[RMDB]
Annotation: Chemical mapping of a 177-nucleotide RNA with 2A3 and DMS. Source: RMDB library OK1LIB, as collected in RNAgym. 2A3 adducts were read by reverse transcription with SuperScript II with manganese. Values cover nucleotides 27 to 126. The 2A3 profile rests on 85,632 reads.
RNA sequence: GGGAACGACUCGAGUAGAGUCGAAAAGCUCUGCGAGAUAGAUCGAACAACAAAGAGAGAUCGAAAAUCUUAGAGGAGAGAACGAAUCUGUCGACUUCACUAGGACAUUGUCGAUCAGAGGUCCAAAGACCAUUGUAUGGUUCGCCGUACGAUGGUCAAAAGAAACAACAACAACAAC
Reactivity to 2A3 in 0.01 (KOAc 150mM, MgCl2 10mM, bicine 150mM(pH8.5), 24C), signal-to-noise 9, nucleotides 027 to 126: g020c000u000c000u010g020c020g010a020g010a030u040a040g040a040u030c020g040a050a050c030a050a030c030a020a300a010g120a020g010a000g000a020u000c000g020a030a030a020a050u000c010u020u030a030g010a030g050g010a010g000a010g020a050a020c030g020a060a130u130c110u170g070u040c030g060a170c000u020u010c030a020c060u050a030g020g030a010c030a130u080u140g120u050c010g000a020u060c010a000g020a010g060g050u010c010c010a040a030a010
Reactivity to DMS in 0.01 (KOAc 150mM, MgCl2 10mM, bicine 150mM(pH8.5), 24C), signal-to-noise 9, nucleotides 027 to 126: g010c010u000c000u000g010c080g000a160g000a040u010a060g000a030u000c010g000a280a280c050a080a110c300a060a100a080g000a080g000a290g000a020u000c000g000a080a040a110a190u000c010u010u000a010g010a060g020g010a020g000a100g000a130a050c030g010a100a100u040c110u040g010u000c010g000a260c010u000u000c020a080c060u010a040g000g000a030c190a070u020u010g000u000c000g000a100u010c020a040g000a050g000g000u010c020c030a060a100a110
The RNA was probed in 150 mM KOAc, 10 mM MgCl2 and 150 mM bicine (pH 8.5) at 24 C. DMS (dimethyl sulfate) methylates the pairing face of unpaired adenines and cytosines.